The record gives the reactivity of an RNA of 177 nucleotides to DMS and 2A3. Reactivities are given for positions 27 through 126. For 2A3, 1,073 sequencing reads were counted. The RNA was probed in 150 mM KOAc, 10 mM MgCl2 and 150 mM bicine (pH 8.5) at 24 C. DMS adducts were read by reverse transcription with MarathonRT.
[RMDB]
RNA sequence: GGGAACGACUCGAGUAGAGUCGAAAACUGGCCAACCAUGUUGGAUUAUUAUUCAAGGACAUUACGGACAAGUUCGUGCGUGAGUCAGAUCUUGAGUAUUUCAGGAAAAAACGUCACAUUGGUGUCACCAUAAUCCUCGCUUCGGCGAGGAUUAUGGAAAAGAAACAACAACAACAAC
Reactivity to DMS in 0.01 (KOAc 150mM, MgCl2 10mM, bicine 150mM(pH8.5), 24C), signal-to-noise 1, nucleotides 027 to 126: c050u000g010g000c020c000a140a070c040c140a110u000g010u010u020g010g000a060u000u000a060u010u000a040u000u000c000a010a060g010g000a100c010a070u000u000a010c000g000g020a060c050a170a190g020u000u030c140g000u000g000c040g040u010g010a040g030u010c020a060g000a210u010c010u000u010g000a040g010u010a040u000u010u010c040a040g000g040a020a060a120a070a010a090c220g050u010c050a020c090a160u000u000g000g000u020g000u000c030a270
Reactivity to 2A3 in 0.01 (KOAc 150mM, MgCl2 10mM, bicine 150mM(pH8.5), 24C), signal-to-noise 1, nucleotides 027 to 126: c030u010g040g000c050c050a020a000c020c080a100u130g030u030u070g040g060a070u090u030a060u140u010a020u000u170c000a010a020g030g010a010c080a090u020u020a020c000g080g040a000c070a140a030g280u140u180c130g000u160g140c020g010u010g010a010g050u010c030a030g070a270u100c010u030u060g000a010g020u000a000u060u080u090c070a020g130g000a010a010a020a070a010a010c110g020u040c020a040c000a080u050u100g110g000u000g000u060c010a020